[RMDB]
RNA sequence: GGGAACGACUCGAGUAGAGUCGAAAAAGCUUUUCCAUUUGAAACACUUUCAGCAUGUCGUGCGUAUUUGGAUUCACGCACGACACAGCAGUUAACAAUCGAAGUCUUAGUGACUGUCGAUGGUGUAUAAGUAAUCCCUUCGGGGAUUACAAAAGAAACAACAACAACAAC
Reactivity to 2A3 in 0.01 (KOAc 150mM, MgCl2 10mM, bicine 150mM(pH8.5), 24C), signal-to-noise 9, nucleotides 027 to 129: a030g050c020u040u030u010u000c020c000a060u170u100u260g190a120a080a000c020a000c040u030u070u070c040a020g000c000a010u010g010u000c000g010u010g000c010g010u040a120u070u130u190g270g050a170u150u150c060a000c000g000c000a000c010g000a000c000a000c010a000g000c020a010g010u040u110a070a020c030a030a010u000c000g010a010a010g020u000c010u070u160a140g040u160g170a020c010u100g200u080c010g000a000u010g000g010u010g030u010a110u010a140a020
Reactivity to DMS in 0.01 (KOAc 150mM, MgCl2 10mM, bicine 150mM(pH8.5), 24C), signal-to-noise 6, nucleotides 027 to 129: a050g040c100u010u000u000u010c010c030a130u030u060u040g020a140a150a060c070a020c050u000u000u000c070a040g040c010a300u000g000u000c010g030u010g030c030g030u020a020u020u070u040g060g030a180u020u020c130a040c020g000c020a030c000g000a030c010a020c100a000g020c000a090g050u020u050a000a100c250a120a020u000c040g030a130a020g020u020c010u020u050a120g030u000g030a020c000u010g040u010c020g040a010u000g000g000u020g040u020a050u050a090a120
This 170-nucleotide RNA was probed chemically with 2A3 and DMS. The reactions ran in a buffer of 150 mM KOAc, 10 mM MgCl2 and 150 mM bicine (pH 8.5), at 24 C. DMS adducts were read by reverse transcription with MarathonRT.